[RMDB]
Background: The record gives the reactivity of an RNA of 177 nucleotides to DMS. Conditions: 150 mM KOAc, 10 mM MgCl2 and 150 mM bicine (pH 8.5), 24 C.
RNA sequence: GGGAACGACUCGAGUAGAGUCGAAAAAUAUUAUAGCACAAGCAUUAGACUCAACUGAUACUCCGAUGGAUACAUUCGAAGAUAGAGUGGAGAGUGAUGUUUUAGUCGGUGCUAAGGUACGAAGUAACUGAGCACCCCCAUUCGUGGGGGUGCUCAGAAAAGAAACAACAACAACAAC
Reactivity to DMS in 0.01 (KOAc 150mM, MgCl2 10mM, bicine 150mM(pH8.5), 24C), signal-to-noise 1, nucleotides 027 to 126: a110u020a010u010u010a120u010a060g000c020a000c030a180a080g000c030a000u020u010a030g000a100c010u020c190a120a000c000u010g010a220u010a080c010u000c010c010g010a110u010g030g010a190u010a060c050a030u020u000c000g020a020a030g010a170u010a150g000a070g030u010g000g000a060g000a070g010u000g000a000u000g010u000u000u000u000a110g010u010c100g040g020u000g020c000u010a080a250g010g000u000a060c110g010a030a150g000u020a060a130